[RMDB]
RNA sequence: GGGAACGACUCGAGUAGAGUCGAAAAGAUAUGGAAAGCGAUGCAAACCUGGUGUCGGAAACGACACUCAGGGACGUAUAUCGCUUCCUAAGUCAAAGGUCAAGUCCACUUCGGUGGACUUGACCAAGUAAUUUAUGACCUUCGGGUCAUAAAUUACAAAAGAAACAACAACAACAAC
Reactivity to DMS in 0.01 (KOAc 150mM, MgCl2 10mM, bicine 150mM(pH8.5), 24C), signal-to-noise 2, nucleotides 027 to 126: g030a020u010a300u000g000g000a020a020a040g020c000g000a010u000g000c040a070a300a300c000c000u000g000g010u010g000u000c000g010g000a070a050a180c000g000a000c000a010c000u000c020a020g000g000g000a040c300g000u000a130u030a060u000c000g000c000u000u000c000c000u000a030a190g000u000c050a060a170a110g000g000u000c000a010a000g000u000c000c000a020c010u000u000c150g020g010u000g000g000a000c000u000u000g000a000c020c000a000a030
Reactivity to 2A3 in 0.01 (KOAc 150mM, MgCl2 10mM, bicine 150mM(pH8.5), 24C), signal-to-noise 2, nucleotides 027 to 126: g000a010u040a020u110g010g020a250a090a010g000c010g020a000u020g040c060a080a170a170c000c020u010g020g010u010g010u010c010g010g000a060a090a020c000g000a000c010a000c020u070c000a010g000g000g000a020c020g010u000a100u020a020u180c000g000c010u000u020c000c000u020a100a010g080u030c040a050a100a100g000g000u000c010a010a010g000u070c000c000a000c050u090u180c300g100g020u000g030g000a000c010u000u000g010a000c010c000a000a000

An RNA of 177 nucleotides, treated with DMS and 2A3 and read out base by base.
The reactions ran in a buffer of 150 mM KOAc, 10 mM MgCl2 and 150 mM bicine (pH 8.5), at 24 C.